[RMDB]
RNA sequence: GGGAACGACUCGAGUAGAGUCGAAAAGACGAACGAAAACACAAAUGUUCCACGGUGCACAAGGGUCCCUCACAUGAGGAUCACCCAUGUAACUCGGACAGGAUAUGCUUUUGGGAAAAAGAGAGAAACAGUGCUGUGUUUUCGAACACAGCACUGUAAAAGAAACAACAACAACAAC
Reactivity to 2A3 in 0.01 (KOAc 150mM, MgCl2 10mM, bicine 150mM(pH8.5), 24C), signal-to-noise 1, nucleotides 027 to 126: g140a030c080g000a110a000c020g000a040a020a000a000c090a000c040a040a130a030u090g020u110u060c000c030a000c050g020g000u040g000c080a050c020a120a080g050g000g000u020c050c020c000u040c000a250c030a200u220g020a010g040g020a020u070c050a010c000c000c000a000u010g000u000a010a030c030u060c090g000g000a000c000a010g030g020a020u040a030u190g020c040u010u020u000u000g060g080g090a000a050a030a130a000g080a000g020a000g050a010a160
Reactivity to DMS in 0.01 (KOAc 150mM, MgCl2 10mM, bicine 150mM(pH8.5), 24C), signal-to-noise 1, nucleotides 027 to 126: g000a100c090g010a210a130c010g000a010a010a030a040c020a010c090a030a120a130u000g000u000u000c000c000a090c160g000g030u000g000c160a000c010a040a070g000g000g040u000c170c050c000u000c000a150c290a060u010g000a020g020g000a060u000c090a010c000c000c000a110u000g000u000a050a020c070u000c080g000g000a060c020a080g000g010a150u000a080u000g000c010u010u000u000u000g000g010g000a080a030a010a050a020g000a110g040a070g010a160a070

Notes
This 177-nucleotide RNA was probed chemically with 2A3 and DMS. Conditions: 150 mM KOAc, 10 mM MgCl2 and 150 mM bicine (pH 8.5), 24 C. The 2A3 profile rests on 887 reads. For DMS, 576 sequencing reads were counted. 2A3 adducts were read by reverse transcription with SuperScript II with manganese.